[RMDB]
RNA sequence: GGGAACGACUCGAGUAGAGUCGAAAAGCUUAAUAACCUGCGCUGAGCCCUUCUACCCCAGCUUGCCUGUGUCCUAGGGAAUUGGAAGGUCAUCCUUCACAGGAUCGUGUGGAAGUCCUGCUCGGGGUCCAAACAUGGUAAUUCGUUACCAUGUUAAUCUUCAGCAUAGAUUCGUCUAUGCUGAAGAAAAAGAAACAACAACAACAAC
Reactivity to 2A3 in 0.01 (KOAc 150mM, MgCl2 10mM, bicine 150mM(pH8.5), 24C), signal-to-noise 6, nucleotides 027 to 156: g020c020u110u090a090a030u070a190a200c020c050u040g020c030g020c070u050g020a020g000c010c020c000u030u020c010u030a030c010c020c000c020a020g000c070u080u140g060c020c010u050g010u020g020u090c010c060u050a070g020g030g070a090a110u110u120g050g030a050a030g050g040u060c020a080u090c000c010u040u050c030a020c010a050g040g020a080u040c050g030u060g010u020g110g020a040a030g050u070c020c020u040g010c010u020c020g000g000g030g020u010c010c020a060a020a000c000a000u010g000g000u000a020a020u050u050c130g040u060u000a000c000c000a000u000g010u000u010a020a050
Reactivity to DMS in 0.01 (KOAc 150mM, MgCl2 10mM, bicine 150mM(pH8.5), 24C), signal-to-noise 2, nucleotides 027 to 156: g020c040u000u010a120a100u010a110a100c030c010u000g040c040g020c050u000g030a100g000c050c130c020u000u000c040u000a120c030c000c000c020a100g000c070u010u000g010c040c030u000g010u000g010u000c030c040u000a100g000g030g010a090a160u020u000g030g000a090a070g020g010u000c090a090u000c030c000u000u010c100a080c050a040g010g010a050u000c060g000u000g030u000g010g020a080a080g010u000c020c000u010g000c030u010c070g010g020g030g000u010c020c020a080a030a020c010a000u000g000g020u000a010a080u000u020c300g020u000u000a000c010c000a000u000g010u000u000a030a120
Structure probing data (2A3 and DMS) for a 207-nucleotide construct. For 2A3, 4,910 sequencing reads were counted. The reactions ran in a buffer of 150 mM KOAc, 10 mM MgCl2 and 150 mM bicine (pH 8.5), at 24 C.